[RMDB]
RNA sequence: GGGAACGACUCGAGUAGAGUCGAAAAAACUUCUCUGGUCUGGGUUUGUAUCAUUCUCAUCUGUUUCCAUAGCACCCAAUACUUCUCCUCCCCUAGUAGUCAUCAAGCUGUACCAUGAUUUUUAGUUUGCCUGCCCAUACUCCCUCUAGACUGGAAACACCAUGAUACCAUUCGUGGUAUCAUGGUGAAAAGAAACAACAACAACAAC
Reactivity to DMS in 0.01 (KOAc 150mM, MgCl2 10mM, bicine 150mM(pH8.5), 24C), signal-to-noise 1, nucleotides 027 to 156: a030a040c040u000u020c060u010c000u000g010g040u020c080u000g020g010g020u020u000u010g020u000a090u000c040a120u010u000c010u000c030a070u000c030u000g020u000u010u010c020c010a140u010a090g000c110a080c050c000c020a090a130u000a050c020u000u000c030u000c040c030u000c020c010c020c020u010a110g020u000a060g010u030c050a080u010c060a060a090g000c040u000g020u000a090c020c030a100u000g000a080u000u000u000u000u000a090g020u010u000u000g020c020c030u000g010c000c000c060a090u000a070c060u000c020c010c000u010c050u000a100g000a080c040u040g000g000a110a070a150